[RMDB]
RNA sequence: GGGAACGACUCGAGUAGAGUCGAAAAUCUCAAAGCUUCGGCUUUGAGACAGUAAGGGAAACCGAUUUUUCCGGUCGACUCCGGAGAAACAAAGUCAAAUAAGAACGUUAGGCUUCGGCCUAACGAAUCUAGAGCAACGAUUCGUCGUUGCUCUAGAAAAAGAAACAACAACAACAAC
Reactivity to DMS in 0.01 (KOAc 150mM, MgCl2 10mM, bicine 150mM(pH8.5), 24C), signal-to-noise 2, nucleotides 027 to 126: u000c000u000c000a020a000a000g020c010u000u020c270g070g030c010u010u000u000g010a000g010a010c080a030g000u000a090a080g000g000g030a080a080a210c040c040g010a110u000u000u000u000u000c000c020g000g020u000c040g010a030c030u010c000c010g010g010a050g020a060a000a180c170a000a000a010g010u020c040a110a080a160u030a090a080g000a140a140c030g010u000u010a010g000g010c010u010u020c160g020g020c000c000u010a010a000c020g000a030a010
Reactivity to 2A3 in 0.01 (KOAc 150mM, MgCl2 10mM, bicine 150mM(pH8.5), 24C), signal-to-noise 2, nucleotides 027 to 126: u000c000u000c000a000a020a000g000c020u080u150c230g070g000c000u040u020u000g000a020g000a000c020a030g140u120a080a170g090g030g000a010a050a070c000c000g010a010u060u030u000u170u030c000c000g020g000u000c030g000a010c080u060c300c010g000g000a040g070a010a030a000c010a000a000a000g030u090c080a000a030a060u150a070a030g060a110a020c010g000u000u010a000g000g000c010u010u060c260g100g000c000c000u000a000a000c000g000a000a000

The record gives the reactivity of an RNA of 177 nucleotides to DMS and 2A3. The RNA was probed in 150 mM KOAc, 10 mM MgCl2 and 150 mM bicine (pH 8.5) at 24 C. Reactivities are given for positions 27 through 126. The data come from the RNA Mapping Database (RMDB), library M2PK50.